[RMDB]
RNA sequence: GGGAACGACUCGAGUAGAGUCGAAAAUCCUAAGUCAACACCCUUGUAGAGGAGCUAUGGAGCAUAUCGGAAACGAUAUGCGUUGAAAUAGCUCUACCCACCUACAUGUGUAGGAUAGGUGUUGAUAUGGAAAAACUAUGUAGUUUCGACUACAUAGGUUCACUAAGCACUUCGGUGCUUAGUGAACAAAAGAAACAACAACAACAAC
Reactivity to 2A3 in 0.01 (KOAc 150mM, MgCl2 10mM, bicine 150mM(pH8.5), 24C), signal-to-noise 2, nucleotides 027 to 156: u010c000c000u040a120a040g040u010c000a010a010c000a000c000c020c010u090u090g070u110a070g020a080g100g030a000g010c000u000a000u000g020g010a030g010c000a000u010a000u000c000g080g000a100a070a060c020g000a000u010a000u020g000c000g020u020u020g020a000a000a020u000a000g000c000u010c000u010a000c040c000c010a080c000c000u020a020c040a160u300g190u110g050u170a060g030g050a110u110a050g000g000u020g000u000u000g000a010u020a080u050g030g000a050a080a000a030a070c000u010a000u010g010u000a010g000u000u030u300c300g100a040c000u000a000c000a000u000a000g040
An RNA of 207 nucleotides, treated with 2A3 and read out base by base. 2A3 adducts were read by reverse transcription with SuperScript II with manganese. The data come from the RNA Mapping Database (RMDB), library RNAMAK.